[RMDB]
RNA sequence: GGGAACGACUCGAGUAGAGUCGAAAAGAUAUGGAGCGUUGCUUUUGACGAAGUCUUGGGUCGGAAACGACCCUUGGCUUCGAUAAGCACCGCUCCUAAGUCAAACCGACUGCUUCGGCAGUCGGAAGUCAUCUAGUUCGUUCGCGAACUAGAUGACAAAAGAAACAACAACAACAAC
Reactivity to DMS in 0.01 (KOAc 150mM, MgCl2 10mM, bicine 150mM(pH8.5), 24C), signal-to-noise 2, nucleotides 027 to 126: g000a040u000a300u000g020g000a000g000c000g010u000u000g010c000u000u000u000u000g020a210c200g000a020a010g020u000c010u000u000g000g010g000u000c000g000g000a050a090a220c010g010a000c010c010c000u000u000g010g000c000u000u000c010g000a030u000a000a000g000c000a020c070c000g000c000u000c000c010u000a000a060g000u000c030a070a100a220c010c000g010a020c000u000g000c000u010u030c190g000g050c000a000g020u010c000g000g000a020a050
Reactivity to 2A3 in 0.01 (KOAc 150mM, MgCl2 10mM, bicine 150mM(pH8.5), 24C), signal-to-noise 1, nucleotides 027 to 126: g060a010u090a040u140g000g000a000g040c000g000u000u030g000c010u000u130u210u220g190a110c070g010a010a010g000u000c000u010u010g010g000g000u000c040g010g050a060a060a000c000g000a000c000c000c030u010u010g000g010c010u000u020c000g010a010u000a010a000g020c020a000c000c000g000c000u000c000c000u000a020a000g010u030c020a070a070a070c000c010g000a010c000u010g020c020u070u170c300g110g000c010a000g030u000c000g000g000a010a010